Structure probing data (2A3) for a 207-nucleotide construct.
[RMDB]
RNA sequence: GGGAACGACUCGAGUAGAGUCGAAAACUGCCAGGCGAUACAAAUCUAGGCAUAAACCUUUUUGACACGGGGGAUAAGUUUGAUGCGAGACCAGCAGCAGCAGGACGAAUUGAGAAUUACAGAGCGCAGGGAGGGCGGUAUGCUGGGUUUUUGUACGUCAACUACCUACGUUCGCGUAGGUAGUUGAAAAAGAAACAACAACAACAAC
Reactivity to 2A3 in 0.01 (KOAc 150mM, MgCl2 10mM, bicine 150mM(pH8.5), 24C), signal-to-noise 1, nucleotides 027 to 156: c000u000g000c000c000a000g060g070c110g150a130u020a170c070a020a070a000u110c010u100a060g010g000c010a000u140a030a170a080c060c000u030u080u090u130u110g100a030c040a000c150g000g000g000g000g050a020u050a140a030g020u040u110u160g060a050u080g050c050g000a070g000a100c000c000a030g030c030a000g000c000a000g000c020a000g020g000a010c070g070a000a010u090u090g060a050g000a070a080u020u010a000c010a020g020a050g000c070g040c030a050g000g130g010a080g040g010g010c120g000g000u060a100u030g000c000u070g000g040g100u090u100u080u080u090g080u140a050c000g050
The reactions ran in a buffer of 150 mM KOAc, 10 mM MgCl2 and 150 mM bicine (pH 8.5), at 24 C.